[RMDB]
RNA sequence: GGGAACGACUCGAGUAGAGUCGAAAAGACUCUGAUAAAUAGAGAUAUGUAUGACUGAGUCUCAGGGCAUCAGAGCAAACGGAAGGACAGAGCAUCCUCAGUCAUACUUGAUGCAAUAGCCUUCCAAGAUAGUUGUCUAUUUCGAUAGAUAGCUAUCAAAAGAAACAACAACAACAAC
Reactivity to 2A3 in 0.01 (KOAc 150mM, MgCl2 10mM, bicine 150mM(pH8.5), 24C), signal-to-noise 9, nucleotides 027 to 126: g030a010c000u000c000u000g010a010u030a120a160a040u170a110g040a010g020a030u050a060u230g040u010a030u040g040a020c010u010g030a020g100u030c020u020c090a040g040g050g020c040a010u000c000a010g000a000g010c010a050a070a030c070g000g000a000a000g000g010a010c020a020g060a010g000c000a010u020c000c020u030c020a000g000u000c010a010u010a070c010u010u110g000a000u010g000c000a030a090u040a070g010c000c000u000u000c000c000a000a010
Reactivity to DMS in 0.01 (KOAc 150mM, MgCl2 10mM, bicine 150mM(pH8.5), 24C), signal-to-noise 9, nucleotides 027 to 126: g010a140c000u000c000u010g010a020u010a040a150a110u050a100g000a060g000a080u020a070u030g010u000a060u010g000a020c020u000g010a090g010u020c050u000c040a100g010g010g030c210a020u000c000a000g000a020g010c040a090a090a090c180g000g010a010a000g000g000a050c030a060g000a300g010c110a010u000c030c140u000c060a030g000u000c030a030u010a080c100u030u020g000a020u000g010c010a050a180u010a150g000c000c010u000u010c000c010a100a070